[RMDB]
Structure probing data (2A3 and DMS) for a 207-nucleotide construct. The 2A3 profile rests on 6,506 reads. DMS (dimethyl sulfate) methylates the pairing face of unpaired adenines and cytosines. The DMS profile rests on 2,283 reads. Values cover nucleotides 27 to 156. Conditions: 150 mM KOAc, 10 mM MgCl2 and 150 mM bicine (pH 8.5), 24 C.
RNA sequence: GGGAACGACUCGAGUAGAGUCGAAAACAUUUACGCUGGGCUCCGAACUCUCGGUAAAGCUAGCUUAUCUGAAGCGCGCACGGAUAAGCUUGGACCUUUACACGAGAUCCCGGAGCCUGUGCUGAAGCGCGCACGGCAACCGAAAGGUGCGAACAAACAUCUCAUACUUGUUCGCAAGUAUGAGAUGAAAAGAAACAACAACAACAAC
Reactivity to 2A3 in 0.01 (KOAc 150mM, MgCl2 10mM, bicine 150mM(pH8.5), 24C), signal-to-noise 4, nucleotides 027 to 156: c040a060u180u200u300a060c010g000c000u000g000g000g000c000u000c010c000g050a170a070c020u000c000u000c020g010g010u000a000a000a000g010c020u000a010g000c000u000u000a000u000c000u020g070a240a120g000c010g000c000g000c000a010c010g010g000a000u010a010a020g000c000u050u300g010g000a010c000c000u120u000u000a050c300a120c020g000a000g010a000u020c010c000c000g000g000a000g000c000c000u000g000u000g000c000u020g030a110a040g000c000g000c000g000c010a010c000g000g000c010a010a020c010c000g070a090a050a010g030g000u000g010c010g080a030a010c030a040a070a010
Reactivity to DMS in 0.01 (KOAc 150mM, MgCl2 10mM, bicine 150mM(pH8.5), 24C), signal-to-noise 1, nucleotides 027 to 156: c010a150u010u020u000a080c020g060c030u000g010g000g040c010u000c010c000g050a050a110c060u010c010u010c020g000g000u000a020a020a040g000c040u010a010g040c000u000u010a010u010c000u010g000a070a020g030c010g040c050g090c000a300c070g000g000a010u020a030a010g050c000u000u000g060g000a010c300c000u000u000u010a000c040a100c050g040a040g000a060u000c010c030c020g030g010a060g040c000c010u000g000u010g020c030u000g000a090a060g020c010g000c020g020c000a300c020g010g000c020a090a150c000c010g000a170a070a240g010g010u020g040c000g000a040a090c090a120a140a220